[RMDB]
RNA sequence: GGGAACGACUCGAGUAGAGUCGAAAACGCACCUUCGGGUGCGCACCAGGAUAUGGAUCAUCUUGAGCCUCGGUUUCCCUUUGAUCUCGGAAACGAGGGAGGGAAACCGAGGCAAUGAUGGAUGAUCCUAAGUCUCUUCUCUAGUUUCGACUAGAAAUGAAUGGUAUUGAUUCGUCAAUACCAUUCAAAAAGAAACAACAACAACAAC
Reactivity to DMS in 0.01 (KOAc 150mM, MgCl2 10mM, bicine 150mM(pH8.5), 24C), signal-to-noise 1, nucleotides 027 to 156: c050g030c010a030c000c000u000u000c300g060g030g060u000g040c000g010c010a040c040c020a130g000g010a110u000a260u000g020g000a000u000c000a010u000c000u000u040g000a050g000c000c000u000c020g020g000u000u010u000c000c000c010u000u000u000g020a060u010c020u000c000g010g000a100a120a300c030g010a020g020g000g010a020g000g020g010a020a000a000c070c000g000a000g000g000c000a020a000u000g010a130u000g030g000a070u010g000a030u000c000c040u000a010a110g000u000c000u000c010u010u000c050u000c020u030a000g030u000u000u010c260g000a030c030u000a020g010a050a210a190
Reactivity to 2A3 in 0.01 (KOAc 150mM, MgCl2 10mM, bicine 150mM(pH8.5), 24C), signal-to-noise 2, nucleotides 027 to 156: c000g000c000a000c000c010u050u140c300g140g000g000u000g000c000g010c010a060c020c020a020g070g010a000u040a020u140g000g000a010u000c000a000u010c000u010u020g050a030g020c000c000u000c010g010g000u010u000u000c000c020c000u050u160u060g020a050u000c000u000c000g020g030a080a090a090c010g010a010g010g010g010a030g000g030g000a000a000a000c000c000g000a010g000g000c000a000a000u000g000a000u030g000g010a000u000g000a010u040c000c000u000a000a000g000u010c040u020c020u300u090c040u020c000u010a030g000u000u100u080c220g090a060c010u020a020g030a100a100a110
Structure probing data (DMS and 2A3) for a 207-nucleotide construct. Values are in units of 0.01, from 0 to 300, in steps of 10. For 2A3 the reverse transcriptase was SuperScript II with manganese. The 2A3 profile rests on 2,548 reads. The DMS profile rests on 2,875 reads.